RNA sequence: GGGAACGACUCGAGUAGAGUCGAAAAGGACUGCGGAGUCCGGCAACAUCAGCAGAGAGCCCGCUAUACGUGACGGAUUGGCUGAAGCGUACAGAAAUAUUGAGCCUCCUGCAAGAGGCAGCCAAGCAAAACGUACGUGAGUUCGCUCACGUACGAACAACUAGAUAAUCUUCGGAUUAUCUAGUUGAAAAGAAACAACAACAACAAC
Reactivity to DMS in 0.01 (KOAc 150mM, MgCl2 10mM, bicine 150mM(pH8.5), 24C), signal-to-noise 3, nucleotides 027 to 156: g000g020a040c030u020g020c040g010g000a120g010u000c030c010g020g020c040a090a140c030a150u000c010a080g000c010a090g000a150g010a150g000c020c020c020g050c010u000a070u010a040c020g020u010g030a300c020g020g000a200u000u000g030g040c000u000g000a030a300g030c010g030u000a080c040a060g040a050a100a130u000a170u010u010g000a100g030c030c020u000c010c040u000g040c150a110a120g000a060g040g010c020a050g040c040c000a050a090g010c060a050a070a100a110c010g020u000a000c000g000u000g010a010g040u000u010c300g040c010u000c010a020c000g020u000a000c000g000a030a060
Reactivity to 2A3 in 0.01 (KOAc 150mM, MgCl2 10mM, bicine 150mM(pH8.5), 24C), signal-to-noise 5, nucleotides 027 to 156: g020g010a030c040u050g030c110g080g050a040g030u000c030c000g020g030c020a060a060c010a110u130c030a030g010c030a010g070a000g010a020g100c010c020c000g030c030u070a070u010a110c050g040u040g040a020c030g020g070a110u050u060g040g000c010u020g020a060a010g020c000g030u050a030c030a040g140a080a150a020u270a090u160u180g050a040g010c000c000u000c020c040u120g060c050a070a050g000a010g030g000c010a000g000c010c020a020a000g010c040a020a090a040a010c000g000u000a000c000g010u010g000a000g000u050u110c150g010c090u000c000a000c000g000u000a000c000g000a000a020